[RMDB]
RNA sequence: GGGAACGACUCGAGUAGAGUCGAAAAUACCAAUGGUUCGCCAUUGGUACUUGUAUUGACGAAUACUACCGUAGAAGUAUUCAGGACUCAUAACUACGGAUAUACACUAGAGUUUCGACUCUAGUAAUACCAUUUUUUGGUUCGCCAAAAAAUGGUAAAAAGAAACAACAACAACAAC
Reactivity to 2A3 in 0.01 (KOAc 150mM, MgCl2 10mM, bicine 150mM(pH8.5), 24C), signal-to-noise 4, nucleotides 027 to 126: u020a000c000c000a010a000u010g000g070u060u060c210g030c050c010a000u000u000g010g010u000a020c010u040u090g110u100a140u090u190g080a030c060g020a010a000u000a020c000u090a300c010c000g000u010a010g010a170a000g010u010a010u020u030c010a030g020g130a030c040u030c120a070u100a230a070c020u020a010c010g010g030a030u050a010u030a150c080a000c010u000a000g000a010g000u020u080u150c220g070a010c000u000c000u000a000g000u000a000a000
Reactivity to DMS in 0.01 (KOAc 150mM, MgCl2 10mM, bicine 150mM(pH8.5), 24C), signal-to-noise 3, nucleotides 027 to 126: u000a000c000c000a000a000u000g000g000u000u000c230g020c010c000a000u010u000g000g010u000a000c070u000u000g020u000a150u000u000g020a170c140g000a020a010u000a010c000u000a120c010c010g000u000a000g000a150a020g010u000a010u000u000c040a100g000g020a230c060u020c030a050u010a100a170c000u000a010c010g010g000a300u020a080u010a060c210a030c000u000a000g000a020g000u000u010u000c190g010a010c010u000c000u000a000g000u000a050a130
Overview: Chemical mapping of a 177-nucleotide RNA with 2A3 and DMS. Source: RMDB library M2PK50, as collected in RNAgym. For 2A3 the reverse transcriptase was SuperScript II with manganese. DMS (dimethyl sulfate) methylates the pairing face of unpaired adenines and cytosines. For 2A3, 3,262 sequencing reads were counted. The reactions ran in a buffer of 150 mM KOAc, 10 mM MgCl2 and 150 mM bicine (pH 8.5), at 24 C.